[RMDB]
RNA sequence: GGGAACGACUCGAGUAGAGUCGAAAAGUAUUACAGCAACGACACUAACCAACAUUGAUUCACUGACGAUUUCAGGGGACGCGUCGUAGACUUGUGUGUCGUAAAAUCCCGGUAGAAUUGGUGGGUAUCCGAUGGUCUGACAGGUAUAACUCACGGGGUAUCCUUAGACCUUCGGGUCUAAGGAUACAAAAGAAACAACAACAACAAC
Reactivity to 2A3 in 0.01 (KOAc 150mM, MgCl2 10mM, bicine 150mM(pH8.5), 24C), signal-to-noise 3, nucleotides 027 to 156: g070u060a030u150u130a090c040a040g030c060a110a000c010g000a000c000a000c030u160a120a090c070c080a030a070c070a080u080u220g060a100u230u080c040a060c100u120g040a000c050g150a110u030u190u190c060a060g020g030g010g030a000c010g000c000g060u000c040g010u010a020g000a020c070u110u000g060u000g010u010g000u140c000g000u000a020a050a000a050u020c000c000c000g000g020u130a120g020a110a110u120u110g100g000u010g000g030g000u030a040u010c030c000g050a070u020g040g090u010c020u040g020a030c010a060g000g000u050a050u040a120a040c050u060c060a010c110g080g000g000
Reactivity to DMS in 0.01 (KOAc 150mM, MgCl2 10mM, bicine 150mM(pH8.5), 24C), signal-to-noise 1, nucleotides 027 to 156: g050u010a070u020u000a130c110a190g030c020a160a110c030g070a070c010a030c020u000a070a100c040c040a090a120c040a130u010u010g010a100u000u000c000a100c010u000g000a040c050g010a210u010u000u000c050a070g020g000g040g020a030c080g010c040g090u020c060g050u010a110g000a090c110u000u020g060u010g030u000g030u010c030g010u000a020a080a050a190u000c020c000c030g000g000u040a180g000a070a110u000u020g000g010u000g000g020g040u010a060u010c010c030g030a120u020g010g000u010c060u010g020a070c040a050g060g030u000a090u000a030a000c000u040c080a030c060g000g000g000